[RMDB]
RNA sequence: GGGAACGACUCGAGUAGAGUCGAAAAUUGUAUUGAAGAAAAGGGUGCACAGGCUGAUGUUAUUUGUCGUCAGUACUAUAACGGAAUCUCUGUUUUACCUGCUUUAACAGAUAGUCAACGCUUAGGCUUAUAUAGUGCUUCAUUGAUGGGUGGUAUGGCGUACUAACGUCUUCGGACGUUAGUACGCAAAAGAAACAACAACAACAAC
Reactivity to 2A3 in 0.01 (KOAc 150mM, MgCl2 10mM, bicine 150mM(pH8.5), 24C), signal-to-noise 1, nucleotides 027 to 156: u050u020g030u020a050u000u090g030a040a070g020a050a120a000a080g010g000g030u010g000c110a020c030a060g030g030c030u010g010a010u080g090u200u040a060u110u110u130g050u100c020g090u130c000a000g010u120a110c020u050a050u000a020a120c130g160g000a150a150u010c120u000c000u020g040u000u000u000u070a000c030c050u050g000c050u130u030u000a040a000c000a020g000a130u300a090g000u020c040a000a090c160g000c030u170u010a070g110g000c040u090u030a000u000a020u060a030g030u050g040c120u010u030c090a120u040u030g040a050u110g030g090g010u000g000g010u150a050u130g030
The data come from the RNA Mapping Database (RMDB), library OK3TST. An RNA of 207 nucleotides, treated with 2A3 and read out base by base. For 2A3, 338 sequencing reads were counted. Reactivities are given for positions 27 through 156.